[RMDB]
RNA sequence: GGGAACGACUCGAGUAGAGUCGAAAAUUUUGUACUUGCUGUACUUUUACAAUAUGUAUUUGCAGUUAAAUUAAGAUGGUUCCCAGUAGCUGGAUGGGAAGGUUUUUCGACCGCGGUAUUACCGUCACUGCGUAUAGUUAUUCGUAACUAUACGCAGAAAAGAAACAACAACAACAAC
Reactivity to DMS in 0.01 (KOAc 150mM, MgCl2 10mM, bicine 150mM(pH8.5), 24C), signal-to-noise 5, nucleotides 027 to 126: u000u000u010u000g010u020a020c060u000u000g020c010u000g010u010a020c110u010u000u000u010a080c140a160a130u010a060u010g010u000a010u000u000u010g000c010a020g010u000u010a020a030a050u010u000a040a090g000a060u000g020g010u000u000c000c010c010a140g000u010a060g010c060u000g020g010a120u000g010g000g010a070a070g000g000u000u000u010u010u000c090g010a060c050c070g000c040g010g010u000a110u000u010a090c020c010g010u010c140a220
Reactivity to 2A3 in 0.01 (KOAc 150mM, MgCl2 10mM, bicine 150mM(pH8.5), 24C), signal-to-noise 5, nucleotides 027 to 126: u030u050u020u080g050u040a050c010u050u050g010c000u010g020u060a050c060u050u080u060u060a070c060a080a150u140a100u300g010u020a020u040u130u090g010c010a010g010u080u170a030a050a080u070u080a050a020g060a080u070g070g020u010u010c000c010c010a000g040u030a010g000c070u060g060g040a080u030g040g000g010a040a030g020g020u040u010u000u040u130c060g000a020c030c030g020c020g050g000u080a120u220u140a060c000c020g020u040c020a000
An RNA of 177 nucleotides, treated with DMS and 2A3 and read out base by base. It was measured as part of the RMDB library OK2TST. For 2A3, 4,914 sequencing reads were counted.